[RMDB]
RNA sequence: GGGAACGACUCGAGUAGAGUCGAAAAUUGCACAGCAGUCUGAGGUUGACCUAGGACACUAGAGCUUGGUGGGGGGAGGGGCUUCCACAUUGCCAAGGCUUGAGUAGGCAGUUUUACCCUCACUGUGCCACUAAUAGGCUUUCGAGCCUAUUAGUGGAAAAGAAACAACAACAACAAC
Reactivity to DMS in 0.01 (KOAc 150mM, MgCl2 10mM, bicine 150mM(pH8.5), 24C), signal-to-noise 2, nucleotides 027 to 126: u000u000g030c010a060c080a110g020c060a060g030u000c070u010g010a120g020g020u020u010g020a110c070c030u010a180g010g000a070c170a050c070u000a100g010a040g000c030u010u000g020g030u010g010g010g000g000g000g010a040g000g000g010g000c070u000u000c020c030a060c040a120u010u000g030c040c040a080a080g010g010c020u000u000g000a110g000u000a110g010g000c060a040g010u000u010u000u020a200c030c000c010u010c090a060c060u010g020u000g000
Reactivity to 2A3 in 0.01 (KOAc 150mM, MgCl2 10mM, bicine 150mM(pH8.5), 24C), signal-to-noise 2, nucleotides 027 to 126: u070u070g010c030a050c010a040g030c000a020g070u020c030u060g030a050g140g000u120u160g070a100c010c020u070a110g030g050a020c020a010c070u040a020g000a010g050c010u020u040g010g010u040g020g020g000g010g030g010a070g010g010g060g050c060u060u020c010c000a060c000a110u040u210g000c000c030a030a090g140g040c020u020u030g020a010g060u080a110g000g050c020a000g020u000u000u060u130a030c000c010c000u010c030a010c070u050g030u110g070
Overview: The record gives the reactivity of an RNA of 177 nucleotides to DMS and 2A3. Source: RMDB library OK2TST, as collected in RNAgym. 2A3 adducts were read by reverse transcription with SuperScript II with manganese. The RNA was probed in 150 mM KOAc, 10 mM MgCl2 and 150 mM bicine (pH 8.5) at 24 C.